[RMDB]
RNA sequence: GGGAACGACUCGAGUAGAGUCGAAAAGAAAGAAAGAAAGCGGUUGGGUGGGUCCAUCGACCGUCGUGGCGUAUUCGGACGCUUUACCACGACGCGAGGAAAUAGCGAAACCGACCACCCCCUUUAACAGAGGUAUAGUAGUUCGCUACUAUACCAACCAGUGAAUCCUGUUCGCAGGAUUCACUGGAAAAGAAACAACAACAACAAC
Reactivity to 2A3 in 0.01 (KOAc 150mM, MgCl2 10mM, bicine 150mM(pH8.5), 24C), signal-to-noise 1, nucleotides 027 to 156: g010a030a090a050g100a010a070a000g040a030a110a050g190c220g060g100u180u180g200g060g020u070g020g050g000u140c040c010a150u100c020g000a040c040c000g010u000c000g000u000g000g050c110g000u130a130u160u190c060g000g100a010c040g000c040u060u100u160a040c050c000a000c000g000a000c000g020c010g000a040g000g000a000a090a090u040a030g000c060g030a180a000a000c020c000g000a010c010c000a010c000c000c040c000c000u060u230u040a080a010c070a110g050a040g160g000u000a000u000a000g000u000a000g000u040u040c180g000c080u000a000c000u000a000u000a000c000c000a000a030